[RMDB]
RNA sequence: GGGAACGACUCGAGUAGAGUCGAAAAAGAGGGCUUCCGCAGCGCGCUGACGUCGGUGGUGAACAAGUACGCCAAGGACCGCAAGCUACUGAAGGACAAGGACCCCAACCUCACCGGUGACGAUAUCGAGGAUGAAGUCGUUCGCGACUUCAUCCUCAAAAGAAACAACAACAACAAC
Reactivity to DMS in 0.01 (KOAc 150mM, MgCl2 10mM, bicine 150mM(pH8.5), 24C), signal-to-noise 1, nucleotides 027 to 126: a020g010a080g000g000g000c110u010u010c090c040g000c140a000g000c030g060c160g000c110u000g000a060c190g000u000c000g000g100u000g000g000u000g050a040a170c040a080a070g000u000a000c220g030c000c000a010a250g060g000a070c100c050g000c080a100a120g070c000u070a060c050u000g000a090a000g020g010a060c130a000a110g000g010a070c000c000c000c210a160a000c110c000u110c000a000c110c000g000g000u000g000a010c190g000a120u070a120u000c040
Reactivity to 2A3 in 0.01 (KOAc 150mM, MgCl2 10mM, bicine 150mM(pH8.5), 24C), signal-to-noise 1, nucleotides 027 to 126: a000g120a140g000g010g010c000u000u000c060c040g020c040a000g020c000g000c000g020c090u020g000a040c000g070u020c100g200g030u020g000g020u020g010a120a000c070a040a020g060u100a060c000g060c000c020a040a050g000g000a090c000c010g020c000a040a040g010c030u010a010c050u000g020a190a050g000g090a000c070a030a010g080g070a070c010c000c000c000a000a140c000c000u020c000a200c000c030g000g020u030g060a080c000g010a030u020a030u160c060
The record gives the reactivity of an RNA of 177 nucleotides to DMS and 2A3. For 2A3, 511 sequencing reads were counted. The reactions ran in a buffer of 150 mM KOAc, 10 mM MgCl2 and 150 mM bicine (pH 8.5), at 24 C. Values cover nucleotides 27 to 126. Source: RMDB library OK1LIB, as collected in RNAgym. The DMS profile rests on 900 reads. 2A3 adducts were read by reverse transcription with SuperScript II with manganese.